Source: RMDB library M2PK50, as collected in RNAgym. Structure probing data (2A3) for a 177-nucleotide construct. Conditions: 150 mM KOAc, 10 mM MgCl2 and 150 mM bicine (pH 8.5), 24 C.

RNA sequence: GGGAACGACUCGAGUAGAGUCGAAAACCCCUUCAGUUCGCUGAAGGGGAAAGGGUUCUCCCGCCCGCCGAGAACCCAGGCUAAAAGUUAAGGUAGGUGGGCAAACCCUACUCUUCGGAGUAGGGAACUGAUUCUACGAGUUCGCUCGUAGAAUCAGAAAAGAAACAACAACAACAAC
Reactivity to 2A3 in 0.01 (KOAc 150mM, MgCl2 10mM, bicine 150mM(pH8.5), 24C), signal-to-noise 1, nucleotides 027 to 126: c000c000c000c000u000u010c000a050g010u020u110c140g000c080u010g010a010a000g060g000g010g060a050a100a000g000g010g000u010u000c000u000c020c000c010g000c000c000c010g000c000c000g000a000g000a000a000c010c000c010a010g060g020c020u090a130a010a030a220g080u230u100a080a030g160g080u120a010g030g000u070g000g000g000c010a000a000a000c000c000c000u010a000c000u000c010u040u060c200g160g000a000g010u000a000g010g000g000a030a000